[RMDB]
RNA sequence: GGGAACGACUCGAGUAGAGUCGAAAACAAGUUGUAACCACUCAUCCGAAGCUGAUCAUUGUCUCCGUUACGCGCGUACUCAGAGUGUCCUUAUGCUCGCUCGUGAAGUUGGCCGUCGCCCAAGAGCUAAAUAUACCCUGUUCGCAGGGUAUAUUUAAAAAGAAACAACAACAACAAC
Reactivity to 2A3 in 0.01 (KOAc 150mM, MgCl2 10mM, bicine 150mM(pH8.5), 24C), signal-to-noise 4, nucleotides 027 to 126: c030a050a050g050u090u050g060u160a060a040c010c000a050c030u050c020a080u030c010c020g060a060a020g030c060u060g040a080u060c030a070u070u120g050u040c030u010c030c020g020u040u060a060c040g020c010g000c010g050u050a030c010u020c030a030g020a010g060u040g040u060c010c000u100u090a060u140g010c010u010c030g040c000u010c000g070u050g060a090a030g040u050u030g060g040c050c000g030u030c050g010c020c010c000a050a030g090a010g040c030
Reactivity to DMS in 0.01 (KOAc 150mM, MgCl2 10mM, bicine 150mM(pH8.5), 24C), signal-to-noise 9, nucleotides 027 to 126: c090a080a100g010u000u000g010u000a100a130c050c040a080c060u000c040a080u010c030c040g010a090a110g010c050u000g000a070u000c070a060u000u000g010u000c030u000c030c030g010u000u000a060c110g010c090g010c060g020u000a050c050u000c050a090g010a060g020u000g010u000c050c030u000u010a100u010g010c040u000c040g010c040u000c030g010u000g010a050a090g010u000u000g020g010c020c030g010u000c070g010c020c010c020a080a100g000a090g010c120